Record summary:
An RNA of 207 nucleotides, treated with DMS and 2A3 and read out base by base. For 2A3, 1,285 sequencing reads were counted. Reactivities are given for positions 27 through 156.
[RMDB]
RNA sequence: GGGAACGACUCGAGUAGAGUCGAAAAUCUAGCGUCAUGCUCAAGCUCAAAUGUAAUAUUGUCUUUAUCAACUUUGCCCGCAAUAAGCUCUAUACAGUACCAAUAAAGCCCGUAACCUUCUAAACCGUAAUCAAGCAAUACGUUUUGCAAUUUAGCGUCGAUUAUCUGUCUUCGGACAGAUAAUCGAAAAAGAAACAACAACAACAAC
Reactivity to DMS in 0.01 (KOAc 150mM, MgCl2 10mM, bicine 150mM(pH8.5), 24C), signal-to-noise 1, nucleotides 027 to 156: u000c020u000a150g060c080g020u010c060a100u000g060c060u010c090a090a130g060c000u020c050a080a080a210u020g040u000a080a140u000a090u000u000g020u000c030u000u000u010a080u030c030a060a070c030u000u000u010g020c020c020c090g020c050a110a170u000a050a090g010c010u000c060u010a070u000a130c010a050g010u000a060c000c000a070a090u000a070a060a080g010c020c040c030g040u010a050a000c060c020u020u010c020u000a050a050a150c020c010g020u000a070a060u010c000a070a170g000c060a050a130u030a070c080g010u000u000u000u000g000c060a040a170u000u020u000a100g020c080g000
Reactivity to 2A3 in 0.01 (KOAc 150mM, MgCl2 10mM, bicine 150mM(pH8.5), 24C), signal-to-noise 3, nucleotides 027 to 156: u090c030u030a020g010c010g080u080c070a020u090g020c010u050c070a030a020g000c030u060c050a080a120a070u070g040u120a100a030u120a190u170u060g030u000c020u050u140u050a160u070c030a040a060c040u030u070u080g020c000c010c000g020c030a030a050u060a090a020g000c020u000c010u050a030u030a060c010a050g090u060a040c010c020a030a000u060a200a120a000g040c010c000c000g000u010a010a030c040c000u040u060c020u070a100a040a070c030c010g070u070a030a080u070c100a050a050g070c010a000a060u060a090c120g030u050u080u110u060g010c030a050a040u080u100u070a160g030c040g050